[RMDB]
RNA sequence: GGGAACGACUCGAGUAGAGUCGAAAACAAAAACAAUCACUUGAGAUGUCUCCCACAGAUGUGAGGUAUGGUGAUAAUGAACUUUGGGUGAUUAAAAUCAGAGGCAGUGCUUUCCAAACAAAACAAACGUACGUCUGACCUUCGGGUCAGACGUACGAAAAGAAACAACAACAACAAC
Reactivity to 2A3 in 0.01 (KOAc 150mM, MgCl2 10mM, bicine 150mM(pH8.5), 24C), signal-to-noise 1, nucleotides 027 to 126: c000a000a000a000a000a000c040a000a070u150c040a000c000u170u140g130a100g040a040u130g050u120c060u000c040c010c000a030c020a040g300a170u130g000u000g070a100g000g030u100a000u200g000g020u010g130a010u130a080a040u110g070a000a000c030u080u260u170g000g000g000u040g010a030u100u100a000a290a000a060u010c000a000g000a050g000g020c000a040g000u000g000c000u050u070u000c040c000a000a130a120c000a000a000a040a250c000a000a140a000